[RMDB]
An RNA of 177 nucleotides, treated with 2A3 and DMS and read out base by base. 2A3 adducts were read by reverse transcription with SuperScript II with manganese.
RNA sequence: GGGAACGACUCGAGUAGAGUCGAAAAGGUGCGUGGUAUAGAGAUAAUGGUCAAAAAUGGGACAGGUUCACGCUGAGCCGUGAACCUGCUUAUUUCUCACAUUUUGACAGUUUCACAAGUGCUAUGGACUACCAGGCAUCUUCGGAUGCCUGGUAGUAAAAGAAACAACAACAACAAC
Reactivity to 2A3 in 0.01 (KOAc 150mM, MgCl2 10mM, bicine 150mM(pH8.5), 24C), signal-to-noise 2, nucleotides 027 to 126: g080g000u110g030c040g010u020g000g080u030a030u100a040g090a000g030a040u020a140a150u180g110g000u000c000a000a000a000a010a090u040g020g000g030a010c020a000g020g000u000u030c000a000c020g010c100u210g210a020g170c240c000g000u000g000a000a000c020c000u000g000c000u000u080a100u050u060u000c000u080c000a080c070a080u000u020u000u000g020a030c050a020g020u000u090u070c020a030c020a050a040g040u060g010c040u060a060u150g040g030
Reactivity to DMS in 0.01 (KOAc 150mM, MgCl2 10mM, bicine 150mM(pH8.5), 24C), signal-to-noise 1, nucleotides 027 to 126: g000g000u010g000c040g000u000g010g020u030a020u000a040g010a170g020a100u000a010a050u020g000g000u000c010a020a000a030a030a180u020g040g020g000a040c000a000g000g020u050u000c010a000c070g000c010u000g000a080g040c090c000g020u000g000a000a000c000c000u010g000c060u020u020a110u010u000u000c070u020c000a070c170a110u000u000u000u020g000a010c010a150g000u000u010u010c020a000c230a190a200g000u000g000c030u000a100u000g030g030
The DMS profile rests on 1,536 reads.